Chemical mapping of a 177-nucleotide RNA with DMS and 2A3. The reactions ran in a buffer of 150 mM KOAc, 10 mM MgCl2 and 150 mM bicine (pH 8.5), at 24 C. For 2A3 the reverse transcriptase was SuperScript II with manganese. The DMS profile rests on 5,779 reads. The 2A3 profile rests on 17,607 reads.
[RMDB]
RNA sequence: GGGAACGACUCGAGUAGAGUCGAAAAGAUAUGGACCACUCAGGGAGCGACUCGGAAACGAGUCCGCAUCGAUCUGACUGGUCCUAAGUCAAACGACAUGUAUCGAGUUCGCUCGAUACAUGUCGAAGAUACUCAACAUCUUCGGAUGUUGAGUAUCAAAAGAAACAACAACAACAAC
Reactivity to DMS in 0.01 (KOAc 150mM, MgCl2 10mM, bicine 150mM(pH8.5), 24C), signal-to-noise 5, nucleotides 027 to 126: g000a030u000a300u000g010g010a010c000c000a010c120u000c000a010g000g010g010a030g030c000g010a020c000u000c000g000g000a110a090a180c010g000a020g000u000c060c090g040c010a180u000c170g000a050u020c000u010g000a020c110u000g000g000u000c000c000u000a010a060g010u000c030a090a110a230c020g000a010c000a000u010g000u010a000u000c000g000a010g000u000u010c240g010c000u000c000g000a000u000a000c000a000u000g000u010c010g000a020a030
Reactivity to 2A3 in 0.01 (KOAc 150mM, MgCl2 10mM, bicine 150mM(pH8.5), 24C), signal-to-noise 4, nucleotides 027 to 126: g020a010u060a030u130g010g010a000c010c000a010c010u000c010a010g030g020g030a030g010c000g000a000c000u010c000g030g030a050a080a040c010g000a000g000u030c110c040g000c000a240u300c020g070a100u020c010u010g010a010c010u010g010g000u000c000c000u000a040a010g030u000c040a100a070a090c020g000a010c000a000u000g010u010a010u000c010g000a000g000u060u140c280g020c100u000c000g000a000u000a000c000a000u010g000u000c000g000a000a000